Source information:
This 177-nucleotide RNA was probed chemically with 2A3 and DMS. Conditions: 150 mM KOAc, 10 mM MgCl2 and 150 mM bicine (pH 8.5), 24 C. The 2A3 profile rests on 3,163 reads.

RNA sequence: GGGAACGACUCGAGUAGAGUCGAAAAAGCAGCAAAGGAUAUUCCGAUCCUGUUUUGCGGGUUGAUUGCAUAAAUUUAUAUAGCGAUAUAUAAAGUGAGACAGAUGAUUAUCCUUGACAGAAUCCGGCAGCUAUAGUACGUUCGCGUACUAUAGCUGAAAAGAAACAACAACAACAAC
Reactivity to 2A3 in 0.01 (KOAc 150mM, MgCl2 10mM, bicine 150mM(pH8.5), 24C), signal-to-noise 5, nucleotides 027 to 126: a000g120c120a000g020c070a020a050a030g010g000a020u010a020u060u000c040c050g010a050u050c000c020u010g000u020u020u010u010g000c000g010g060g020u120u190g090a120u050u090g020c020a040u100a140a210a110u250u250u040a160u010a020u050a060g010c000g000a010u030a000u000a000u030a100a080a000g020u020g010a010g000a010c010a000g030a010u050g000a010u050u020a000u000c020c000u020u010g060a080c050a060g060a060a070u040c010c000g030g000
Reactivity to DMS in 0.01 (KOAc 150mM, MgCl2 10mM, bicine 150mM(pH8.5), 24C), signal-to-noise 4, nucleotides 027 to 126: a110g040c170a040g030c190a050a010a010g000g010a020u000a030u000u010c030c260g020a060u020c080c010u000g000u010u020u000u010g030c000g010g010g000u010u020g010a100u010u050g000c080a090u020a060a060a080u030u010u010a020u010a050u000a030g000c150g000a170u000a010u000a010u000a020a020a040g020u000g010a100g000a020c020a020g000a130u040g000a040u010u000a020u000c000c000u000u020g000a090c180a090g000a130a120u030c010c020g000g010